[RMDB]
Chemical mapping of a 177-nucleotide RNA with 2A3 and DMS. It was measured as part of the RMDB library TTRINS. The RNA was probed in 150 mM KOAc, 10 mM MgCl2 and 150 mM bicine (pH 8.5) at 24 C. Reactivities are given for positions 27 through 126. For 2A3, 2,517 sequencing reads were counted. High DMS reactivity at an A or C suggests that its Watson-Crick edge is free.
RNA sequence: GGGAACGACUCGAGUAGAGUCGAAAAGAUAUGGACGACCGACGAAGAACCGUAUAGCGGGAGGAGUCCCAUCGGAAACGAUGGUGGCUCCAUCGAUCGCUAUACGGUUCAGAGGUCGUCCUAAGUCGGUUACAAGAUGGUUCGCCAUCUUGUAACCAAAAGAAACAACAACAACAAC
Reactivity to 2A3 in 0.01 (KOAc 150mM, MgCl2 10mM, bicine 150mM(pH8.5), 24C), signal-to-noise 1, nucleotides 027 to 126: g070a080u190a090u230g000g000a000c010g000a020c020c050g070a280c070g110a300a180g040a100a000c000c010g000u000a000u030a030g000c000g000g040g000a020g030g000a000g010u010c030c010c010a000u000c000g020g020a080a010a000c040g000a010u030g050g120u300g020g000c000u000c020c000a000u110c000g000a010u000c000g000c010u010a000u010a000c000g000g000u000u010c010a010g000a010g000g030u010c000g000u000c000c000u020a000a000g000u000c030
Reactivity to DMS in 0.01 (KOAc 150mM, MgCl2 10mM, bicine 150mM(pH8.5), 24C), signal-to-noise 2, nucleotides 027 to 126: g000a090u010a300u010g000g000a000c020g030a000c000c000g000a260c300g010a210a180g000a000a020c000c000g010u000a010u000a010g000c030g000g030g000a030g020g000a020g000u000c000c000c000a000u010c000g000g000a110a060a300c010g000a000u000g030g020u010g040g000c000u000c000c000a040u010c210g000a050u020c000g000c000u000a000u000a000c000g000g000u000u000c020a000g000a080g020g050u000c000g010u000c000c020u000a000a060g000u010c090
For 2A3 the reverse transcriptase was SuperScript II with manganese. Reactivities are rounded to 0.1 and cut off at 0 and 3. DMS adducts were read by reverse transcription with MarathonRT.